This 177-nucleotide RNA was probed chemically with DMS and 2A3.
For 2A3, 26,838 sequencing reads were counted.
For 2A3 the reverse transcriptase was SuperScript II with manganese.
2A3 is a SHAPE reagent: it acylates the 2'-hydroxyl of flexible nucleotides of all four kinds.
The RNA was probed in 150 mM KOAc, 10 mM MgCl2 and 150 mM bicine (pH 8.5) at 24 C.
For DMS, 31,262 sequencing reads were counted.
RNA sequence: GGGAACGACUCGAGUAGAGUCGAAAAGAAAGAAGAGAAUUUGGUCAACUCCUUGGUCACAGCUGGACAUGGGCAGGUCGACAACUUUUCACUAGGAGUCUUGGGAAUGGCAUUGUUCCUGGAGGAAGCUAAAUAUAUCGUUCGCGAUAUAUUUAGCAAAAGAAACAACAACAACAAC
Reactivity to DMS in 0.01 (KOAc 150mM, MgCl2 10mM, bicine 150mM(pH8.5), 24C), signal-to-noise 8, nucleotides 027 to 126: g010a070a060a060g010a080a120g000a050g000a050a060u010u010u000g000g010u010c050a080a080c020u000c020c010u010u010g000g010u000c040a050c090a080g010c060u010g010g010a080c120a070u020g010g000g020c030a060g000g010u000c030g000a060c070a070a090c100u000u010u020u030c080a070c070u010a040g000g010a050g000u000c020u000u000g010g000g000a060a060u030g000g010c060a090u020u020g000u010u000c010c000u000g010g010a070g010g010a120a100
Reactivity to 2A3 in 0.01 (KOAc 150mM, MgCl2 10mM, bicine 150mM(pH8.5), 24C), signal-to-noise 9, nucleotides 027 to 126: g100a010a050a000g090a040a020g060a010g020a050a090u080u070u100g080g000u060c030a050a060c040u030c010c010u050u080g050g000u050c030a030c030a110g030c070u080g000g020a030c020a120u110g010g020g000c040a030g010g070u040c030g020a030c010a040a050c020u060u080u110u090c070a060c050u020a010g060g030a030g040u010c010u070u070g020g010g020a070a070u070g040g010c050a070u030u110g020u040u020c010c000u020g020g010a030g050g040a100a010